[RMDB]
RNA sequence: GGGAACGACUCGAGUAGAGUCGAAAAACGCCGCUACGGCGGCGACUCGCCGUUAUUCGGGGAAGCAGGGCACUGGAGAGCGCUUCAGCACUGCCUCUGGUGGUCGGUUUGUGGAUGGGGGCGGGAAUGACCCUGUGUACUUCGGUACACAGGGUCAAAAAGAAACAACAACAACAAC
Reactivity to 2A3 in 0.01 (KOAc 150mM, MgCl2 10mM, bicine 150mM(pH8.5), 24C), signal-to-noise 2, nucleotides 027 to 126: a000c010g000c000c020g000c010u000a100c230g140g000c000g020g000c000g060a020c010u000c020g210c000c050g150u020u120a110u130u020c050g040g020g070g050a030a030g050c070a060g000g010g020c020a000c020u080g040g000a000g000a020g090c030g000c010u200u290c060a000g000c060a010c050u110g000c010c010u030c000u000g040g000u020g020g290u010c000g000g060u030u040u060g130u070g060g040a110u020g020g040g000g000g100c100g040g000g000a030a020
Source: RMDB library RFM100, as collected in RNAgym. Chemical mapping of a 177-nucleotide RNA with 2A3. Values cover nucleotides 27 to 126. The reactions ran in a buffer of 150 mM KOAc, 10 mM MgCl2 and 150 mM bicine (pH 8.5), at 24 C.